[RMDB]
RNA sequence: GGGAACGACUCGAGUAGAGUCGAAAAAGCCAAUCCUUCGGGAUUGGCUACAGCAACGAAGCAAAGGAACGAGACAAGACGAGCAAAAGAUCGAGCAUGCUACACACCCCAUCUUCGGAUGGGGUAAGAAUUGUCUUGAAUUCGUUCAAGACAAUUCAAAAGAAACAACAACAACAAC
Reactivity to 2A3 in 0.01 (KOAc 150mM, MgCl2 10mM, bicine 150mM(pH8.5), 24C), signal-to-noise 5, nucleotides 027 to 126: a000g010c000c000a000a000u020c010c010u020u060c220g060g000g000a000u000u010g000g000c000u000a000c010a000g000c010a030a040c040g100a060a010g020c030a070a020a030g040g020a080a010c040g020a020g030a080c030a040a040g050a050c050g030a010g050c040a050a070a050a030g040a030u060c020g000a010g040c030a020u070g040c030u120a060c060a010c000a000c070c000c010c000a010u010c000u020u050c120g060g000a000u000g000g010g010g000u000a000a000
Reactivity to DMS in 0.01 (KOAc 150mM, MgCl2 10mM, bicine 150mM(pH8.5), 24C), signal-to-noise 6, nucleotides 027 to 126: a020g010c000c000a000a010u000c000c000u000u010c240g030g010g000a010u000u000g000g000c000u000a010c050a040g010c060a030a060c090g010a070a070g010c040a050a040a080g000g000a060a050c070g010a090g010a060c050a050a060g010a070c070g010a050g010c050a070a040a090a050g010a050u010c100g010a080g010c050a060u010g010c080u000a080c120a080c170a090c000c000c000c000a010u000c000u010u010c180g010g000a010u000g010g000g000g000u000a000a020
This 177-nucleotide RNA was probed chemically with 2A3 and DMS. Source: RMDB library M2PK50, as collected in RNAgym. For DMS, 7,553 sequencing reads were counted. The reactions ran in a buffer of 150 mM KOAc, 10 mM MgCl2 and 150 mM bicine (pH 8.5), at 24 C.